[RMDB]
Source: RMDB library TTRDES, as collected in RNAgym.
An RNA of 177 nucleotides, treated with DMS and 2A3 and read out base by base.
The RNA was probed in 150 mM KOAc, 10 mM MgCl2 and 150 mM bicine (pH 8.5) at 24 C.
The 2A3 profile rests on 7,538 reads.
For DMS, 3,418 sequencing reads were counted.
RNA sequence: GGGAACGACUCGAGUAGAGUCGAAAAGAUAUGGACCAGGUGGAGCCUUUGAUCGUUAUCGGAAACGAUAACGGGAGGCUACCACUGGUCCUAAGUCAAAACGCAUCACGGUUCGCCGUGAUGCGAACAUUCUUGACAGGUUCGCCUGUCAAGAAUGAAAAGAAACAACAACAACAAC
Reactivity to DMS in 0.01 (KOAc 150mM, MgCl2 10mM, bicine 150mM(pH8.5), 24C), signal-to-noise 3, nucleotides 027 to 126: g000a050u000a300u000g010g010a020c000c000a030g020g020u000g060g000a160g010c020c000u000u000u010g020a070u030c000g010u010u000a000u000c000g000g010a160a110a200c000g030a000u000a000a000c000g000g000g000a000g010g030c000u000a070c010c020a250c000u000g000g000u000c000c020u000a000a060g010u000c040a070a070a130a200c030g000c000a010u000c010a020c020g010g000u000u020c300g040c000c000g010u000g000a000u000g000c000g000a030a100
Reactivity to 2A3 in 0.01 (KOAc 150mM, MgCl2 10mM, bicine 150mM(pH8.5), 24C), signal-to-noise 3, nucleotides 027 to 126: g030a020u070a040u170g000g010a000c010c010a040g110g290u190g030g070a020g010c000c000u220u210u120g180a180u190c010g000u010u010a000u030c010g000g060a120a030a040c010g010a000u000a010a000c000g000g010g000a000g000g010c000u060a080c000c010a000c000u010g000g000u050c000c000u000a000a000g000u030c020a030a010a080a140c020g000c010a000u010c000a000c020g010g080u090u120c300g080c130c000g000u000g000a010u000g000c000g000a000a000